[RMDB]
Conditions: 150 mM KOAc, 10 mM MgCl2 and 150 mM bicine (pH 8.5), 24 C. The record gives the reactivity of an RNA of 177 nucleotides to DMS and 2A3. It was measured as part of the RMDB libraries RFM100 and RFMREP. 2A3 adducts were read by reverse transcription with SuperScript II with manganese. 2A3 is a SHAPE reagent: it acylates the 2'-hydroxyl of flexible nucleotides of all four kinds.

RNA sequence: GGGAACGACUCGAGUAGAGUCGAAAAAGCAGGCAUGGAUACGUCCAUGCCUGCAAUUCAAGUGAUGACAUUAUUGUUCAACUGCUAAGUGAUGUAGAUAUGAACAAAAAGGAAUUCUGAGGGGUAAACGGUAUCAUUGUUUCGACAAUGAUACCGUAAAAGAAACAACAACAACAAC
Reactivity to DMS in 0.01 (KOAc 150mM, MgCl2 10mM, bicine 150mM(pH8.5), 24C), signal-to-noise 3, nucleotides 027 to 126: a110g000c000a000g000g010c020a010u000g020g010a020u000a080c190g010u000c000c000a010u000g010c000c010u020g020c000a000a020u030u000c040a060a060g000u030g000a020u010g010a300c080a070u010u000a150u000u000g020u000u000c000a050a060c040u000g000c000u010a080a130g010u020g000a080u020g000u000a000g000a100u020a140u000g000a020a000c010a000a010a050a090a110g000g030a070a080u000u000c000u000g010a180g000g000g010g000u000a060a090
Reactivity to 2A3 in 0.01 (KOAc 150mM, MgCl2 10mM, bicine 150mM(pH8.5), 24C), signal-to-noise 3, nucleotides 027 to 126: a000g030c020a000g010g000c000a020u000g030g000a000u030a090c120g020u000c000c000a000u020g000c000c000u000g040c030a000a000u020u000c010a000a030g080u020g090a070u030g020a070c080a080u020u150a130u100u050g000u000u020c000a100a130c000u000g030c000u040a090a040g240u180g240a170u110g030u050a000g010a080u090a200u230g000a000a000c000a020a010a000a030a000g080g000a020a010u030u000c020u070g020a060g000g000g000g020u050a110a050